An RNA of 207 nucleotides, treated with 2A3 and read out base by base. The data come from the RNA Mapping Database (RMDB), library OK3TST. The reactions ran in a buffer of 150 mM KOAc, 10 mM MgCl2 and 150 mM bicine (pH 8.5), at 24 C.
RNA sequence: GGGAACGACUCGAGUAGAGUCGAAAAAGAGUCCAAGACCAGCUUGGGCAACCUGUGAGACCUUGUCUCUACUAAAAAAAUUUUUUCUUUGAAAAAUUAGCCAGGCGUGGUGGCACAUACCUGUAGUCCUAGCUACUUGGGAUGCUGAAGCAGGAAGGAUUAUCUGUCAGUUCGCUGACAGAUAAUCAAAAGAAACAACAACAACAAC
Reactivity to 2A3 in 0.01 (KOAc 150mM, MgCl2 10mM, bicine 150mM(pH8.5), 24C), signal-to-noise 1, nucleotides 027 to 156: a000g000a010g060u000c000c000a030a000g060a090c000c060a010g140c000u000u050g000g000g000c020a000a070c010c020u060g050u040g020a000g010a010c020c080u090u130g030u020c010u030c000u010a020c060u100a000a080a120a080a100a150a180u130u050u010u010u070u080c070u130u120u170g000a000a000a040a060a030u110u040a020g060c100c090a010g030g030c040g030u060g020g020u000g010g020c020a010c010a060u150a060c010c000u020g030u050a050g010u030c010c000u040a040g020c020u060a060c020u080u080g000g040g000a000u040g060c080u110g010a100a020g010c020a020g030g160a030a080g100